[RMDB]
RNA sequence: GGGAACGACUCGAGUAGAGUCGAAAAGCGGGGUUGAACAGGACUUUUACCGUUGACUGGGCUCAUCAUCCGGAAGUGUUCGUCCUAGCCGGAGGGCCAAGCAGAGAUCUUUGCGCGAACUGCGCACGGAGAAGCCCUGGCGAGGUGACGUAGGACCGGAAAUAGAUUAGUUCGCUAAUCUAUUUCCAAAAGAAACAACAACAACAAC
Reactivity to 2A3 in 0.01 (KOAc 150mM, MgCl2 10mM, bicine 150mM(pH8.5), 24C), signal-to-noise 5, nucleotides 027 to 156: g040c010g010g020g010g000u030u060g020a080a030c030a050g010g020a030c020u060u060u040u090a130c020c000g020u020u020g040a060c040u040g010g010g010c020u030c050a140u040c020a080u010c080c000g010g030a050a030g070u070g050u180u150c120g040u120c020c000u020a030g020c010c010g030g040a020g010g010g000c000c010a030a010g050c020a020g060a020g010a160u020c010u040u080u090g000c020g010c010g070a190a090c100u190g000c010g000c010a010c030g000g000a030g010a040a020g000c000c000c010u020g010g000c010g010a030g020g040u060g020a020c020g000u030a060g020g030a030c030c080
Reactivity to DMS in 0.01 (KOAc 150mM, MgCl2 10mM, bicine 150mM(pH8.5), 24C), signal-to-noise 3, nucleotides 027 to 156: g010c040g020g010g020g040u000u000g010a110a150c040a080g010g000a080c020u010u000u000u000a070c020c020g020u000u010g010a090c040u000g000g030g050c040u000c080a080u010c070a160u010c000c000g020g020a100a120g030u010g000u000u010c090g000u000c060c030u000a100g000c040c030g030g010a120g020g020g010c000c020a040a090g020c040a150g010a160g020a160u000c050u000u000u000g010c020g000c010g000a110a140c120u010g020c030g030c020a020c050g000g000a100g010a090a110g010c020c010c010u000g020g000c030g020a050g030g020u000g010a070c050g020u010a050g000g000a120c060c100

Source: RMDB library ARCHII, as collected in RNAgym. This 207-nucleotide RNA was probed chemically with 2A3 and DMS. The reactions ran in a buffer of 150 mM KOAc, 10 mM MgCl2 and 150 mM bicine (pH 8.5), at 24 C. For 2A3, 5,008 sequencing reads were counted. DMS adducts were read by reverse transcription with MarathonRT.